[RMDB]
RNA sequence: GGGAACGACUCGAGUAGAGUCGAAAAAAAUUGAAUUCCUGUUGUAGAAUCGUUGAGCGCAACGUCGUACGUGCUGCUCUUCUUGCCGGUUCAUUUGACAAAGUCUAUGAUAUUGGCAAUCCUAAAGCCUAGUGUAAGUCUUCGGACUUACACUAGGAAAAGAAACAACAACAACAAC
Reactivity to DMS in 0.01 (KOAc 150mM, MgCl2 10mM, bicine 150mM(pH8.5), 24C), signal-to-noise 1, nucleotides 027 to 126: a040a040a120u000u000g000a090a140u000u000c010c010u000g010u010u000g000u010a060g000a050a030u000c160g000u010u000g000a050g010c040g000c020a040a070c020g030u000c300g000u010a300c040g020u000g000c010u010g000c000u000c000u000u010c000u000u010g010c020c000g000g010u000u000c020a010u010u010u000g000a030c030a090a120a160g010u010c000u000a010u000g000a010u000a030u000u000g010g020c010a050a020u010c060c020u010a050a220a130g010

This 177-nucleotide RNA was probed chemically with DMS. The data come from the RNA Mapping Database (RMDB), library 15KREP. The RNA was probed in 150 mM KOAc, 10 mM MgCl2 and 150 mM bicine (pH 8.5) at 24 C. Values cover nucleotides 27 to 126.